[RMDB]
RNA sequence: GGGAACGACUCGAGUAGAGUCGAAAAAUCGACGCCAUCAUUUGUUUGCAGAAAGGACAUGAGGUGGAUCCCUACAAUCUCGAGGCCCUCCUCGCCCUCGGUGUGUCCCUGACAAACGAGCUCGAUGGAUUCGGUCUACUUUCGAGUAGACCGAAUCAAAAGAAACAACAACAACAAC
Reactivity to 2A3 in 0.01 (KOAc 150mM, MgCl2 10mM, bicine 150mM(pH8.5), 24C), signal-to-noise 1, nucleotides 027 to 126: a000u030c000g050a080c080g020c070c010a070u080c020a000u070u010u160g050u030u010u010g060c010a020g160a190a170a060g040g040a000c010a020u120g040a010g040g010u050g070g080a130u140c000c000c000u010a110c050a060a190u080c060u080c150g040a020g000g000c000c000c010u030c020c020u030c000g000c020c000c020u020c050g000g080u050g000u030g000u060c010c000c000u000g040a050c010a000a020a010c010g010a030g050c040u070c040g020a030u010g060
Reactivity to DMS in 0.01 (KOAc 150mM, MgCl2 10mM, bicine 150mM(pH8.5), 24C), signal-to-noise 1, nucleotides 027 to 126: a090u000c020g000a080c140g030c050c070a090u010c050a140u000u000u010g000u010u000u010g050c050a080g020a120a100a140g000g000a030c030a110u000g030a020g000g010u000g000g020a060u000c110c000c000u000a120c220a080a060u020c170u000c050g000a060g000g020c110c030c070u000c030c030u000c080g010c180c000c020u000c050g020g050u000g020u000g000u000c000c020c020u010g000a080c050a010a010a010c010g020a090g000c220u000c080g000a050u000g030

The record gives the reactivity of an RNA of 177 nucleotides to 2A3 and DMS. For DMS the reverse transcriptase was MarathonRT. Reactivities are given for positions 27 through 126.